[RMDB]
Record summary: Source: RMDB library OK3TST, as collected in RNAgym. The record gives the reactivity of an RNA of 207 nucleotides to 2A3 and DMS.
RNA sequence: GGGAACGACUCGAGUAGAGUCGAAAAGAGGCGAAAUAAUUCCCAUCUCCUUUGUACGGCCGGAGAUGGGUAUGGCCGUACUAAUAAGCCUCAUAGUGACGAGAGUCACGAAUUCUGGAUAGCCUAUGGUAGUCGGCUAUCCUAUGACUACCGUAGACAUAGCGGUAAAUUUCGAUUUACCGCUAUGAAAAGAAACAACAACAACAAC
Reactivity to 2A3 in 0.01 (KOAc 150mM, MgCl2 10mM, bicine 150mM(pH8.5), 24C), signal-to-noise 5, nucleotides 027 to 156: g000a000g020g010c030g050a080a100a070u200a030a080u150u030c000c010c010a020u060c070u070c010c030u070u090u080g000u030a020c010g010g000c010c010g070g040a120g030a100u210g040g020g010u050a030u080g000g000c000c010g010u000a010c000u010a010a090u070a080a020g010c000c000u010c010a040u090a050g020u020g000a000c010g000a010g010a020g130u000c000a000c010g010a030a040u150u040c040u060g050g040a040u040a060g040c000c010u020a030u030g070g000u030a040g030u020c020g030g020c050u060a080u070c000c010u080a120u120g000a000c020u030a040c010c020g030u020a010g000a010
Reactivity to DMS in 0.01 (KOAc 150mM, MgCl2 10mM, bicine 150mM(pH8.5), 24C), signal-to-noise 2, nucleotides 027 to 156: g010a040g020g000c000g020a110a080a120u000a060a180u000u000c010c000c020a140u000c040u010c030c010u000u000u000g030u010a000c030g000g040c020c050g050g000a090g030a080u000g010g000g010u000a000u000g010g030c030c020g000u000a110c040u000a060a150u000a110a270g000c020c010u010c020a150u010a230g020u000g020a070c030g010a300g000a300g020u010c000a030c000g010a070a120u000u000c090u020g000g000a250u000a080g000c060c000u000a070u000g020g030u000a010g000u010c080g010g000c050u000a040u030c060c070u000a030u000g020a040c020u000a020c000c000g020u000a040g010a100
2A3 adducts were read by reverse transcription with SuperScript II with manganese.